[RMDB]
RNA sequence: GGGAACGACUCGAGUAGAGUCGAAAACGAGGAAUGAUUCGAACUACGUCGUACCGGGGCUCGAGCGCGGGCUGCGGAUCCUGGCCGAGUUCUCGCCGCGAGAGCCGGUGCUCGGCGCGCCGGAGCACCACUACGCUCGUUUCGACGAGCGUAGUGGAAAAGAAACAACAACAACAAC
Reactivity to DMS in 0.01 (KOAc 150mM, MgCl2 10mM, bicine 150mM(pH8.5), 24C), signal-to-noise 2, nucleotides 027 to 126: c050g020a060g010g000a080a090u010g010a180u010u010c040g020a090a110c050u010a090c070g020u010c060g020u000a130c030c000g000g010g000g030c000u000c010g000a040g020c030g000c000g000g000g010c010u010g020c010g010g000a030u010c020c070u000g000g010c040c050g010a100g030u000u000c040u000c030g010c010c020g000c040g010a170g020a070g000c010c010g000g050u000g010c040u000c000g000g000c180g020c060g000c030c010g000g010a250g010c190a240
Reactivity to 2A3 in 0.01 (KOAc 150mM, MgCl2 10mM, bicine 150mM(pH8.5), 24C), signal-to-noise 3, nucleotides 027 to 126: c040g020a080g070g110a220a110u120g040a130u150u140c050g040a080a020c020u070a080c130g120u100c040g040u060a100c030c000g000g020g060g000c000u010c020g000a030g020c040g000c080g050g020g000c030u090g020c030g000g040a060u080c010c040u060g110g000c080c050g020a030g000u080u000c040u020c010g020c000c010g080c030g030a230g040a020g300c030c020g030g000u030g000c010u020c000g050g000c100g040c030g040c030c000g020g000a010g050c010a040